[RMDB]
RNA sequence: GGGAACGACUCGAGUAGAGUCGAAAAAUGGAGACAUGGCAUAGAGGCAGAGAAACACACUUCAAAGACUUUUUCACUUGAAAUAACUUUGCAUCUCAUUGCGACCCGAGACUCUUCGGAGUCUCGGCGUACUGGCGGUAUUCGUACCGCCAGUACGAAAAGAAACAACAACAACAAC
Reactivity to 2A3 in 0.01 (KOAc 150mM, MgCl2 10mM, bicine 150mM(pH8.5), 24C), signal-to-noise 2, nucleotides 027 to 126: a020u060g020g010a060g010a000c040a110u080g090g000c020a030u020a070g040a020g020g000c020a010g050a000g020a070a220a000c020a010c010a020c120u030u060c030a060a050a120g030a260c120u160u040u040u110u040c130a060c080u080u070g060a040a040a080u160a090a010c000u020u010u050g000c000a080u040c030u000c020a110u090u140g030c030g030a080c020c020c000g000a000g010a000c020u060c000u110u110c200g090g000a010g020u000c000u000c000g010g000
Reactivity to DMS in 0.01 (KOAc 150mM, MgCl2 10mM, bicine 150mM(pH8.5), 24C), signal-to-noise 1, nucleotides 027 to 126: a110u000g000g000a120g010a100c050a010u010g010g000c040a060u020a060g050a050g000g000c020a030g000a090g000a120a060a060c220a070c180a160c140u000u000c080a030a080a050g020a120c230u030u000u000u000u000c060a120c120u030u000g000a040a020a060u000a030a070c050u000u000u000g000c110a060u000c080u000c110a180u000u010g020c040g000a140c180c010c010g000a000g010a020c000u000c000u000u020c220g000g010a010g010u000c000u000c000g000g010